[RMDB]
RNA sequence: GGGAACGACUCGAGUAGAGUCGAAAACUUGUCGGUGAAUCCUCCCCUGAGAGGCCUCUUCCUAGGUCCGGAGUCUAUCUCCAUCUGGUCUGUUCGGGCCCUCUUCGCCGGGGGAGCCCCCUCUCCAUCCUUAUCCUUCUUUCCAAGAAUUCCUUUGCUAAUAGAGUUACUUCGGUAACUCUAUUAGAAAAGAAACAACAACAACAAC
Reactivity to 2A3 in 0.01 (KOAc 150mM, MgCl2 10mM, bicine 150mM(pH8.5), 24C), signal-to-noise 2, nucleotides 027 to 156: c060u080u160g100u150c070g060g000u090g160a120a140u070c000c010u010c010c010c000c020u020g010a030g020a050g080g030c010c010u070c020u110u040c020c040u070a030g000g000u040c070c130g020g020a010g010u090c120u210a150u130c010u030c030c040a040u020c080u060g020g090u040c050u050g090u160u090c070g030g000g000c040c060c020u010c020u110u130c040g050c070c030g000g010g000g010g020a000g010c000c010c000c000c000u010c000u000c010c010a040u020c020c000u050u050a090u120c000c000u030u100c000u050u120u030c030c000a090a030g090a090a110u050u110c050c020u070u070u060g050